[RMDB]
RNA sequence: GGGAACGACUCGAGUAGAGUCGAAAAUGCCGGUGCGGUGAAUAAGGCAGUAAGUUUGCAUGCGUGCAAACCGAUGAGCCGUCAUUGACCUAGUGUGACUCUGCCGAUAUGGAUUAGGCGCACCGGCGAUACUACUGAUGUUCGCAUCAGUAGUAUCAAAAGAAACAACAACAACAAC
Reactivity to DMS in 0.01 (KOAc 150mM, MgCl2 10mM, bicine 150mM(pH8.5), 24C), signal-to-noise 9, nucleotides 027 to 126: u010g020c000c000g010g020u000g020c000g020g020u010g000a020a010u010a300a180g000g000c000a010g010u000a300a130g000u000u000u000g000c000a020u000g030c200g020u000g000c000a000a010a000c000c010g000a210u010g010a170g020c300c130g000u000c010a010u000u000g010a200c000c000u000a010g020u000g010u000g000a010c000u000c010u000g000c000c000g000a070u010a020u000g000g010a010u000u000a010g000g010c000g040c010a010c000c000g010g000c020
Reactivity to 2A3 in 0.01 (KOAc 150mM, MgCl2 10mM, bicine 150mM(pH8.5), 24C), signal-to-noise 9, nucleotides 027 to 126: u180g000c000c000g000g000u000g000c050g080g060u190g080a010a000u020a040a020g010g000c000a000g010u020a040a010g000u000u010u010g000c010a010u030g060c110g190u010g000c010a010a000a010c010c010g030a050u190g110a030g110c070c050g010u000c000a000u000u020g020a050c000c000u000a010g010u010g000u000g010a000c000u010c000u090g000c000c000g020a030u050a000u300g030g000a000u000u010a000g000g000c000g000c000a000c000c000g000g000c000
Chemical mapping of a 177-nucleotide RNA with DMS and 2A3. The RNA was probed in 150 mM KOAc, 10 mM MgCl2 and 150 mM bicine (pH 8.5) at 24 C. It was measured as part of the RMDB library RFMREP.